[RMDB]
RNA sequence: GGGAACGACUCGAGUAGAGUCGAAAAAGAAUCUUCGCCACCGUCAAAUAAAAUGGAUAAUACGAUACCAUAUCUAGCGAAUUUGACCGAAUGCUUCUCACAAUGAAACGUCAGUUUCCAUAUCAUCAAUCGCUGGCUCAAGUCCAUCGCGUCGCGCCAAGAACCUAAGAUUCGUCUUAGGUUCUUGAAAAGAAACAACAACAACAAC
Reactivity to DMS in 0.01 (KOAc 150mM, MgCl2 10mM, bicine 150mM(pH8.5), 24C), signal-to-noise 3, nucleotides 027 to 156: a110g010a080a030u000c030u000u000c030g010c010c010a070c040c050g020u000c050a040a040a050u000a040a090a070a060u010g000g010a070u000a050a110u000a110c080g010a190u000a090c080c030a110u000a060u000c030u000a030g030c060g010a190a120u000u000u000g000a040c020c030g000a060a090u020g010c020u010u000c010u000c040a090c110a090a060u000g000a030a040a030c030g010u010c070a070g020u010u000u000c000c030a080u000a100u010c050a090u010c020a060a080u000c050g030c050u000g000g000c070u010c070a070a120g010u000c020c010a030u010c050g020c080g000u000c000g020c030g040c090
Reactivity to 2A3 in 0.01 (KOAc 150mM, MgCl2 10mM, bicine 150mM(pH8.5), 24C), signal-to-noise 7, nucleotides 027 to 156: a000g080a020a060u070c050u090u080c050g060c040c020a060c040c020g040u040c030a020a080a060u120a100a120a040a040u050g000g030a050u050a160a050u120a180c080g050a030u060a150c020c040a040u050a050u140c040u050a040g060c010g090a100a100u030u020u100g030a050c030c060g050a040a040u070g020c040u090u050c040u030c020a050c020a060a150u140g030a070a040a010c030g070u050c070a050g000u010u040u000c040c020a030u080a090u130c050a010u040c020a050a100u030c020g000c050u020g010g020c020u020c100a070a000g030u060c020c010a040u060c020g020c030g070u060c020g020c010g030c060

This 207-nucleotide RNA was probed chemically with DMS and 2A3. For 2A3 the reverse transcriptase was SuperScript II with manganese. The reactions ran in a buffer of 150 mM KOAc, 10 mM MgCl2 and 150 mM bicine (pH 8.5), at 24 C.